[RMDB]
RNA sequence: GGGAACGACUCGAGUAGAGUCGAAAACUCCCAGGCGGGAGGACGUAGGCGUACACGUGCUCGGUCAGAAGUCGGUGCUGAGGCGACGCAAGCGGCGUUGUUACGCCGGCGGUUACCGUUAUAGGUAGCAGGACGCGAUCUUCGGGUUGCGUCUUGCAAAAGAAACAACAACAACAAC
Reactivity to DMS in 0.01 (KOAc 150mM, MgCl2 10mM, bicine 150mM(pH8.5), 24C), signal-to-noise 9, nucleotides 027 to 126: c170u010c000c000c010a150g000g010c040g000g010g000a100g010g000a060c040g010u010a100g010g000c020g000u010a030c040a060c020g010u010g000c040u010c050g020g000u020c080a120g010a130a190g010u000c020g000g010u010g010c140u010g000a140g000g000c020g000a030c020g000c070a110a050g010c030g010g010c010g000u010u020g010u020u020a030c010g000c000c020g000g010c020g000g000u010u000a110c000c010g000u000u020a200u050a120g000g010u010a100
Reactivity to 2A3 in 0.01 (KOAc 150mM, MgCl2 10mM, bicine 150mM(pH8.5), 24C), signal-to-noise 9, nucleotides 027 to 126: c030u020c000c000c000a010g050g040c030g020g030g010a080g040g040a020c010g020u030a040g010g030c010g010u030a010c030a000c030g030u070g050c020u030c050g060g040u070c030a040g060a160a020g060u060c040g050g110u110g040c060u100g040a070g050g080c010g000a010c020g010c070a060a020g050c010g070g000c010g030u060u090g100u190u040a010c000g000c000c000g000g000c000g010g000u050u070a020c000c000g000u020u070a160u080a130g110g060u040a030
Chemical mapping of a 177-nucleotide RNA with DMS and 2A3. For DMS, 83,152 sequencing reads were counted. It was measured as part of the RMDB library OK1LIB. Conditions: 150 mM KOAc, 10 mM MgCl2 and 150 mM bicine (pH 8.5), 24 C. For DMS the reverse transcriptase was MarathonRT.